[RMDB]
The record gives the reactivity of an RNA of 177 nucleotides to DMS and 2A3.
Conditions: 150 mM KOAc, 10 mM MgCl2 and 150 mM bicine (pH 8.5), 24 C.
For 2A3, 1,950 sequencing reads were counted.
For DMS, 1,428 sequencing reads were counted.
RNA sequence: GGGAACGACUCGAGUAGAGUCGAAAAGAUAUGGAUUCUUCGAUGAUCUGCGUAACAUCCUAAUCGGAAACGAUUAGGUGGCAGUGAGAAGAUCCUAAGUCAAAAGGCCGCUGUUCGCAGCGGCCAAGAUUCGUUCAUUGUUCGCAAUGAACGAAUCAAAAGAAACAACAACAACAAC
Reactivity to DMS in 0.01 (KOAc 150mM, MgCl2 10mM, bicine 150mM(pH8.5), 24C), signal-to-noise 2, nucleotides 027 to 126: g000a030u000a300u000g000g000a020u010u000c000u020u000c000g000a300u000g010a060u000c000u000g010c000g000u010a030a030c260a030u010c000c000u000a000a010u000c010g000g000a090a060a190c000g000a000u000u000a010g000g030u010g020g000c000a010g000u010g010a140g000a040a000g000a030u000c000c000u000a060a210g020u010c040a040a060a160a120g000g000c000c010g010c030u000g010u010u030c160g010c030a030g010c000g080g000c010c010a020a010
Reactivity to 2A3 in 0.01 (KOAc 150mM, MgCl2 10mM, bicine 150mM(pH8.5), 24C), signal-to-noise 2, nucleotides 027 to 126: g010a030u090a060u140g000g060a040u300u120c010u030u030c050g300a300u120g060a040u080c010u010g000c000g020u020a040a040c040a300u200c010c010u010a000a000u000c000g060g000a070a070a070c000g010a000u000u000a000g020g000u000g000g000c010a030g020u000g040a000g030a000a010g000a000u010c000c000u030a190a020g040u050c040a030a000a170a130g010g010c040c000g040c000u030g010u080u090c300g030c170a000g030c000g000g000c000c000a010a000

It was measured as part of the RMDB library TTRDEL.